[RMDB]
An RNA of 207 nucleotides, treated with 2A3 and read out base by base. The RNA was probed in 150 mM KOAc, 10 mM MgCl2 and 150 mM bicine (pH 8.5) at 24 C.
RNA sequence: GGGAACGACUCGAGUAGAGUCGAAAACGAUGUAAGAGCAGACACAGCCAAGCUUGGAGAUGAUCUCUCGCUCGUUGACGAGCUUCUUGUUAUAAAAAAGCGACUGCGGUGGGAAGAUGCCAGGGCGCAGCAGGUUAACCAGCAUCUGGAACUCGCGCGAAAUGACGUGAUUCGUCACGUCAUUUCGAAAAGAAACAACAACAACAAC
Reactivity to 2A3 in 0.01 (KOAc 150mM, MgCl2 10mM, bicine 150mM(pH8.5), 24C), signal-to-noise 1, nucleotides 027 to 156: c030g000a000u040g000u250a210a060g010a020g050c070a000g000a010c010a040c000a230g010c070c030a100a020g070c140u170u170g030g010a160g040a100u100g000a090u010c030u000c000u000c010g000c030u020c010g010u000u060g030a060c060g000a040g000c000u080u000c040u070u050g120u180u140a200u250a130a170a010a010a020a020g050c050g040a030c020u080g030c040g000g070u090g010g010g030a010a040g020a010u030g020c040c070a040g000g010g030c050g000c040a020g030c000a020g060g060u070u030a000a010c000c000a020g040c020a040u010c010u010g000g000a040a040c010u000c070g040c000g010